[RMDB]
RNA sequence: GGGAACGACUCGAGUAGAGUCGAAAACAUGACAAGAAGCGGAGAAUUGCGCUUUGGACAAUGGCAAGAGUUGCAAGGCAAUGAAUGGCAUAUUCCAGCCGAACGCAUGAAGAUGAACCGUCCGCACGUAACACUGUGACUUCGGUCACAGUGUUACAAAAGAAACAACAACAACAAC
Reactivity to DMS in 0.01 (KOAc 150mM, MgCl2 10mM, bicine 150mM(pH8.5), 24C), signal-to-noise 3, nucleotides 027 to 126: c050a090u010g050a130c130a130a150g000a100a140g010c030g000g020a110g010a090a110u010u020g010c010g020c050u000u020u000g030g000a050c210a060a040u000g000g000c040a020a050g010a300g010u010u020g020c010a130a180g090g030c030a020a050u000g010a230a220u000g000g030c010a030u010a100u000u010c040c040a040g000c180c140g000a030a040c040g040c010a040u010g000a130a100g000a060u000g010a090a160c090c060g000u010c000c020g000c020a090c220
Reactivity to 2A3 in 0.01 (KOAc 150mM, MgCl2 10mM, bicine 150mM(pH8.5), 24C), signal-to-noise 2, nucleotides 027 to 126: c020a080u110g080a040c050a050a080g130a120a020g020c010g000g030a040g020a110a100u080u040g000c000g020c040u110u040u050g010g000a020c030a080a020u010g080g030c010a020a000g010a010g040u000u050g030c080a180a090g200g000c010a020a040u020g010a060a070u060g020g020c010a000u060a080u080u100c040c010a020g080c050c050g050a020a010c010g020c020a010u040g030a070a050g040a080u200g020a030a020c020c000g110u010c010c000g000c000a000c060
Record summary:
Conditions: 150 mM KOAc, 10 mM MgCl2 and 150 mM bicine (pH 8.5), 24 C. The record gives the reactivity of an RNA of 177 nucleotides to DMS and 2A3. The DMS profile rests on 1,525 reads. Source: RMDB library OK2TRN, as collected in RNAgym.